[RMDB]
An RNA of 177 nucleotides, treated with DMS and 2A3 and read out base by base. For DMS the reverse transcriptase was MarathonRT. The DMS profile rests on 2,919 reads. For 2A3 the reverse transcriptase was SuperScript II with manganese.
RNA sequence: GGGAACGACUCGAGUAGAGUCGAAAAUAAAUGAGCGUUCAGCACACUCAGACUGUACGCUAUCUGAGUGUGUCAACUUCAAAGUCCAACGACACACACAAGGCGUUGGAACAAGAGUGUGAGAAAAGUAUAGGCCUGAAUUCGUUCAGGCCUAUACAAAAGAAACAACAACAACAAC
Reactivity to DMS in 0.01 (KOAc 150mM, MgCl2 10mM, bicine 150mM(pH8.5), 24C), signal-to-noise 4, nucleotides 027 to 126: u000a070a080a080u010g020a070g020c060g000u000u010c050a200g000c020a000c000a000c000u020c010a020g000a050c100u000g040u000a070c250g020c040u000a120u010c040u000g010a010g010u000g020u000g010u000c070a080a050c040u010u000c060a040a170a160g000u000c060c020a010a010c020g010a060c030a080c120a080c170a140c270a070a070g020g000c000g000u000u000g000g010a010a030c090a070a200g000a030g010u000g010u000g010a080g000a040a040a030a070
Reactivity to 2A3 in 0.01 (KOAc 150mM, MgCl2 10mM, bicine 150mM(pH8.5), 24C), signal-to-noise 3, nucleotides 027 to 126: u150a000a090a100u150g020a010g050c070g050u030u040c040a010g030c000a000c000a000c010u010c000a010g000a030c020u090g030u180a040c150g010c190u010a030u000c010u000g000a000g000u010g000u010g000u000c000a010a000c010u100u080c030a040a040a050g020u020c020c010a010a000c020g080a040c010a020c010a010c010a000c030a250a040g090g000c000g010u010u010g010g010a000a000c030a020a030g020a010g040u070g010u070g080a100g080a040a140a010a020